[RMDB]
RNA sequence: GGGAACGACUCGAGUAGAGUCGAAAAGCGCACAAGUUCGCUUGUGCGCAAAGGGAAACGAGGCAGGGGCUGGCGCCAUGAGCCAUCCCAAGCCCUGGGAAAAAAGGCGAGCCUUCGGGCUCGCCAACCAAAAACUAGUGUUCGCACUAGUUUUUGGAAAAGAAACAACAACAACAAC
Reactivity to DMS in 0.01 (KOAc 150mM, MgCl2 10mM, bicine 150mM(pH8.5), 24C), signal-to-noise 2, nucleotides 027 to 126: g020c000g050c000a020c000a040a010g010u000u000c200g040c020u000u000g000u000g050c000g020c000a000a060a130g000g000g010a080a070a100c070g010a050g020g020c030a080g020g020g000g040c050u000g000g020c030g020c120c240a110u010g000a140g010c000c000a010u000c000c010c000a030a050g010c000c000c020u000g000g000g020a000a050a150a040a110a120g010g000c010g040a030g040c000c000u000u030c210g020g000g020c000u000c010g010c020c020a000a020

The record gives the reactivity of an RNA of 177 nucleotides to DMS. DMS adducts were read by reverse transcription with MarathonRT. The reactions ran in a buffer of 150 mM KOAc, 10 mM MgCl2 and 150 mM bicine (pH 8.5), at 24 C.